Chemical mapping of a 177-nucleotide RNA with DMS and 2A3.
The 2A3 profile rests on 5,193 reads.
The reactions ran in a buffer of 150 mM KOAc, 10 mM MgCl2 and 150 mM bicine (pH 8.5), at 24 C.
RNA sequence: GGGAACGACUCGAGUAGAGUCGAAAAGAUAUGGAUCGUGCAGUCCAGCUUGGAUUUAUCGGAAACGAUUGUCAGCUGCUGCACGCGAUCCUAAGUCAAAACCGUAUGCUCUUCGGAGCAUACGGAACACACACGAGAUGUUCGCAUCUCGUGUGUGAAAAGAAACAACAACAACAAC
Reactivity to DMS in 0.01 (KOAc 150mM, MgCl2 10mM, bicine 150mM(pH8.5), 24C), signal-to-noise 2, nucleotides 027 to 126: g010a000u000a300u010g000g000a000u000c000g020u000g000c000a010g010u000c260c020a000g050c000u010u010g000g000a020u010u020u000a000u000c000g000g000a120a070a190c010g020a010u010u000g030u000c000a030g000c000u000g020c000u000g010c010a020c000g010c070g010a030u000c000c000u010a060a120g020u000c030a080a050a090a180c010c000g020u000a000u000g000c000u000c000u000u030c210g010g000a000g010c000a000u010a000c000g010g000a030a040
Reactivity to 2A3 in 0.01 (KOAc 150mM, MgCl2 10mM, bicine 150mM(pH8.5), 24C), signal-to-noise 3, nucleotides 027 to 126: g020a030u080a030u160g010g010a000u040c010g000u030g000c010a020g030u040c190c010a000g040c040u100u260g180g000a090u300u300u170a030u060c020g030g020a070a070a030c000g000a010u010u020g030u010c010a000g000c010u010g000c040u010g000c020a000c000g000c000g010a010u000c000c000u020a110a020g050u060c050a000a010a100a120c000c000g000u000a000u000g000c010u000c020u050u090c300g160g000a000g000c000a000u000a000c000g000g000a000a010